[RMDB]
Structure probing data (DMS and 2A3) for a 177-nucleotide construct. For DMS, 2,505 sequencing reads were counted. Source: RMDB library TTRDES, as collected in RNAgym. The RNA was probed in 150 mM KOAc, 10 mM MgCl2 and 150 mM bicine (pH 8.5) at 24 C.
RNA sequence: GGGAACGACUCGAGUAGAGUCGAAAAAAGAUAUGGAUCGAAUCUCUAGCGUGAGCGAUGAAAUGGGAUAAGUUACUCGGAAACGAGUAACGAAACCCAUGGAGCUUCGGGUUCGAUCCUAAGUCAACCCUGUAACAUUGUUCGCAAUGUUACAGGGAAAAGAAACAACAACAACAAC
Reactivity to DMS in 0.01 (KOAc 150mM, MgCl2 10mM, bicine 150mM(pH8.5), 24C), signal-to-noise 2, nucleotides 027 to 126: a060a040g020a040u000a300u000g010g000a000u000c000g030a010a020u000c000u020c240u000a070g010c080g030u010g010a040g000c040g040a120u020g000a070a080a010u000g000g010g010a080u000a040a300g000u000u000a000c000u000c000g010g010a130a090a230c000g010a020g000u000a000a000c010g000a020a060a110c000c000c000a000u000g000g000a140g000c000u000u010c070g000g000g010u000u000c010g000a020u000c000c010u010a000a090g010u010c030a080a200
Reactivity to 2A3 in 0.01 (KOAc 150mM, MgCl2 10mM, bicine 150mM(pH8.5), 24C), signal-to-noise 2, nucleotides 027 to 126: a000a000g070a040u090a040u160g000g010a000u000c000g020a000a010u020c100u120c150u300a100g110c060g120u300g110a030g050c030g210a300u050g040a040a000a030u000g010g000g000a020u030a170a000g000u000u000a010c010u000c010g010g000a040a120a050c020g000a000g010u000a000a010c000g000a000a010a000c000c020c000a010u010g010g000a020g000c010u050u030c030g010g000g010u010u000c000g000a000u000c000c000u000a140a000g040u000c020a020a090